An RNA of 177 nucleotides, treated with DMS and read out base by base.
For DMS the reverse transcriptase was MarathonRT.
Conditions: 150 mM KOAc, 10 mM MgCl2 and 150 mM bicine (pH 8.5), 24 C.

RNA sequence: GGGAACGACUCGAGUAGAGUCGAAAAGAUAUGGAGAGACAUAGCGAGGUGCGACAUGGCUUUGAGUGUCGGAAACGACAUGUAAGAGCCAACAGCGCACUACCCACCGCUAUGUCUCUCCUAAGUCCAACCUGGUAGACUUCGGUCUACCAGGUUGAAAAGAAACAACAACAACAAC
Reactivity to DMS in 0.01 (KOAc 150mM, MgCl2 10mM, bicine 150mM(pH8.5), 24C), signal-to-noise 2, nucleotides 027 to 126: g030a070u000a120u020g010g000a050g000a000g000a030c000a010u000a000g000c010g000a200g050g000u010g040c030g000a010c020a290u020g050g000c000u010u000u000g060a210g000u010g030u010c000g000g000a040a040a100c000g010a000c000a020u000g010u030a300a040g010a000g000c010c000a030a030c190a180g010c020g000c000a010c010u000a030c050c050c080a300c080c020g000c000u000a010u000g020u000c000u010c000u000c010c010u000a000a020g000u020c000